RNA sequence: GGGAACGACUCGAGUAGAGUCGAAAAGAUAUGGAUCAUUGCCCAGCGCACACGUUUGACGUCGGAAACGACCGAGUGUGACCCGCUGCUCCAAUGAUCCUAAGUCAAAGUUCGGUUCGCCGAACAACACAACGGUAAGGUUCGCCUUACCGUUGUGAAAAGAAACAACAACAACAAC
Reactivity to DMS in 0.01 (KOAc 150mM, MgCl2 10mM, bicine 150mM(pH8.5), 24C), signal-to-noise 3, nucleotides 027 to 126: g010a060u010a300u000g000g000a000u000c010a000u010u000g010c170c300c010a040g010c020g030c020a030c000a010c010g030u020u000u000g010a140c300g000u000c000g030g000a120a080a120c010g020a010c000c020g000a110g000u000g010u000g000a080c150c140c150g000c000u000g010c070u000c030c000a000a010u000g000a000u000c010c000u020a010a100g000u010c030a090a100a110g000u000u000c010g000g000u000u020c170g000c000c000g010a000a020c000a120a170
Reactivity to 2A3 in 0.01 (KOAc 150mM, MgCl2 10mM, bicine 150mM(pH8.5), 24C), signal-to-noise 2, nucleotides 027 to 126: g010a050u080a050u170g010g000a010u020c000a020u000u000g030c070c090c000a000g000c030g000c000a010c000a010c020g050u120u300u290g190a120c080g010u040c000g000g070a090a130a070c030g010a000c000c030g020a020g010u010g000u020g010a040c090c030c010g000c000u000g020c020u000c040c000a000a020u000g010a010u010c000c000u010a110a030g000u000c080a120a060a050g010u030u010c010g000g040u050u090c300g020c020c000g010a010a000c010a040a030